[RMDB]
RNA sequence: GGGAACGACUCGAGUAGAGUCGAAAAUAGGCAUCUUGUUUAAUUCCACUCCUAAAGCAGGGUGUAAUUGCAGAUUUGGAGUAGAAAUAGUCCUUUUUGAUAUAUCACUCACAGACAUCUACCCUACACAGGCCACUCUCUCUCUAAACAAGGUGCAAUUAUUAGGGGCAUUCGUGCCCCUAAUAAUAAAAGAAACAACAACAACAAC
Reactivity to DMS in 0.01 (KOAc 150mM, MgCl2 10mM, bicine 150mM(pH8.5), 24C), signal-to-noise 2, nucleotides 027 to 156: u020a150g030g000c020a010u000c000u020u010g010u000u000u000a020a180u010u010c040c030a040c040u020c020c020u010a050a080a140g010c080a060g040g010g000u000g030u000a040a110u010u010g100c050a060g010a160u000u000u000g020g010a050g040u020a030g020a040a020a140u000a100g000u000c040c020u000u010u010u020u010g000a080u010a160u010a110u000c050a070c040u010c010a130c240a110g010a050c010a080u010c020u000a010c020c040c010u000a080c110a080c050a110g050g060c110c040a040c060u000c010u000c030u010c050u000c050u000a040a010a020c000a020a010g000g010u010g040c010a120

About this RNA: An RNA of 207 nucleotides, treated with DMS and read out base by base. Conditions: 150 mM KOAc, 10 mM MgCl2 and 150 mM bicine (pH 8.5), 24 C.